[RMDB]
RNA sequence: GGGAACGACUCGAGUAGAGUCGAAAACGCUGGGUGCGAGAACUACGCGUUUCUCUCCAAACUUCUUUGAUCACCUGAAGCGCGCACGGGUGGGAGAAGGUAGGAGAGAAACGCGCUCGCACCUGUGCUGAAGCGCGCACGGCAACCGAAAGGUGCGGACGCGUAAAAGCUUCGGCUUUUACGCGUCAAAAGAAACAACAACAACAAC
Reactivity to 2A3 in 0.01 (KOAc 150mM, MgCl2 10mM, bicine 150mM(pH8.5), 24C), signal-to-noise 1, nucleotides 027 to 156: c030g000c010u060g000g000g010u030g010c030g000a020g010a090a040c210u250a030c190g010c010g000u000u000u000c020u010c000u000c000c040a120a300a300c030u060u050c040u230u260u150g070a060u140c000a000c020c010u040g020a290a050g020c000g010c000g010c030a010c010g030g000g000u020g000g030g000a000g000a010a010g020g040u170a110g000g010a000g010a000g000a000a000a000c000g000c000g000c030u020c010g000c000a000c000c000u000g000u010g020c000u030g030a110a060g000c010g000c020g030c040a010c010g030g000c010a020a040c010c000g060a150a000a020g040g020u000g000c000g040
Structure probing data (2A3) for a 207-nucleotide construct. The 2A3 profile rests on 1,269 reads. Reactivities are given for positions 27 through 156. The RNA was probed in 150 mM KOAc, 10 mM MgCl2 and 150 mM bicine (pH 8.5) at 24 C.